The record gives the reactivity of an RNA of 177 nucleotides to DMS and 2A3. The 2A3 profile rests on 2,492 reads. It was measured as part of the RMDB library TTRDEL. The reactions ran in a buffer of 150 mM KOAc, 10 mM MgCl2 and 150 mM bicine (pH 8.5), at 24 C.
[RMDB]
RNA sequence: GGGAACGACUCGAGUAGAGUCGAAAAGAUAUGGAAAUAUCAUAUCGUGACGAUGAAAUCGGAAACGAUGGAGUCACAUAUGAGUAUUUCCUAAGUCAAAACGCGUGUAGCUUCGGCUACACGCGAACCGCUUAUAUUUCUUCGGAAAUAUAAGCGGAAAAGAAACAACAACAACAAC
Reactivity to DMS in 0.01 (KOAc 150mM, MgCl2 10mM, bicine 150mM(pH8.5), 24C), signal-to-noise 2, nucleotides 027 to 126: g000a010u000a300u000g010g000a020a010a000u000a040u000c000a040u000a010u010c230g030u000g000a020c010g020a120u010g000a050a140a020u000c000g020g000a190a100a170c010g010a020u010g000g000a080g020u000c000a000c000a010u020a000u000g000a030g000u000a010u000u000u000c000c000u010a010a160g000u010c030a050a020a080a160c020g020c030g010u030g020u000a010g000c000u000u040c290g030g000c000u000a000c020a000c050g020c000g000a020a010
Reactivity to 2A3 in 0.01 (KOAc 150mM, MgCl2 10mM, bicine 150mM(pH8.5), 24C), signal-to-noise 2, nucleotides 027 to 126: g010a000u090a050u130g010g000a000a000a010u010a010u020c000a000u010a020u030c180g010u010g000a000c000g110a300u090g060a030a040a020u020c020g050g060a150a010a040c020g000a000u000g040g030a040g000u000c000a000c010a000u020a010u000g080a090g260u040a010u000u000u020c000c010u020a130a010g060u040c020a010a070a070a170c040g000c000g000u000g000u000a000g000c000u030u040c300g100g000c030u000a000c020a010c020g010c010g000a000a000